[RMDB]
RNA sequence: GGGAACGACUCGAGUAGAGUCGAAAAUCCGACGAGCAGAACGCUUUCGAAGGAAAGCUUGACCAGCUAAUCUUCUGCAACGCCAUUACGAGGACUGCCCUUAGAGGCUCAUGGCGAUAGGUCACCCAAAACUAUUUGAGGUUCGCCUCAAAUAGAACAUCAAGUGAAGGUUCGCCUUCACUUGAUGAAAAGAAACAACAACAACAAC
Reactivity to 2A3 in 0.01 (KOAc 150mM, MgCl2 10mM, bicine 150mM(pH8.5), 24C), signal-to-noise 9, nucleotides 027 to 156: u030c010c010g040a050c060g030a030g010c010a000g020a140a030c050g020c030u070u130u120c070g100a090a070g100g030a100a100a000g000c000u060u100g010a020c010c000a020g030c040u060a110a090u060c060u070u010c020u030g010c020a050a040c010g000c010c000a030u080u120a080c100g050a080g090g100a100c110u110g010c000c000c000u070u160a120g030a170g090g000c010u010c020a020u010g010g000c010g050a080u110a090g000g000u010c010a070c020c030c020a050a120a040a070c000u000a010u000u000u010g000a000g000g040u070u120c200g110c040c000u000c000a000a000a000u000a000g000a000a020
Reactivity to DMS in 0.01 (KOAc 150mM, MgCl2 10mM, bicine 150mM(pH8.5), 24C), signal-to-noise 3, nucleotides 027 to 156: u000c020c010g000a100c030g020a300g000c010a090g000a090a130c120g020c000u000u000u000c020g000a240a200g020g000a050a070a010g000c020u010u000g000a160c030c040a160g000c050u000a090a080u010c040u010u000c000u000g010c000a130a170c000g020c000c010a070u000u010a120c090g010a150g010g020a070c060u010g030c030c010c030u000u010a070g000a170g000g040c000u000c050a060u000g000g020c010g000a090u010a020g000g000u000c030a140c030c000c010a040a060a070a200c010u000a010u000u010u000g000a030g000g020u010u010c300g010c020c000u000c000a000a030a000u000a010g000a060a190